[RMDB]
RNA sequence: GGGAACGACUCGAGUAGAGUCGAAAAUGGCUACACAUCUGGUGGUGUUGCGCGAUAAGCUCGAACCGGUGUUUGCGGCAGGUCAAUACCAGGAAGCACUGGUUGAACUGGCGGCGCUGCGGGAAACGAGCAACUACAGUUUCGACUGUAGUUGCUCAAAAGAAACAACAACAACAAC
Reactivity to 2A3 in 0.01 (KOAc 150mM, MgCl2 10mM, bicine 150mM(pH8.5), 24C), signal-to-noise 1, nucleotides 027 to 126: u030g080g000c040u100a030c080a020c000a200u120c040u160g280g000u040g000g040u040g090u070u100g070c020g000c010g010a040u020a150a030g000c000u000c060g050a050a010c000c010g000g000u030g040u040u070u130g160c090g010g000c080a060g000g010u070c060a030a030u060a190c010c000a020g070g050a060a070g070c010a040c090u040g000g010u000u010g010a000a010c000u040g090g010c000g040g010c050g020c000u050g030c030g020g000g030a060a070a010c050
Reactivity to DMS in 0.01 (KOAc 150mM, MgCl2 10mM, bicine 150mM(pH8.5), 24C), signal-to-noise 2, nucleotides 027 to 126: u010g010g000c050u010a080c100a070c070a140u000c030u000g040g020u010g000g020u000g000u010u010g020c020g030c050g020a130u010a060a070g040c040u000c020g010a080a090c000c040g060g010u000g020u010u000u000g000c040g010g040c080a070g000g000u030c200a150a180u000a070c030c010a040g020g020a120a120g010c070a070c000u000g010g000u010u000g020a050a060c060u020g010g000c100g000g010c060g020c010u000g000c020g000g000g010a060a100a090c150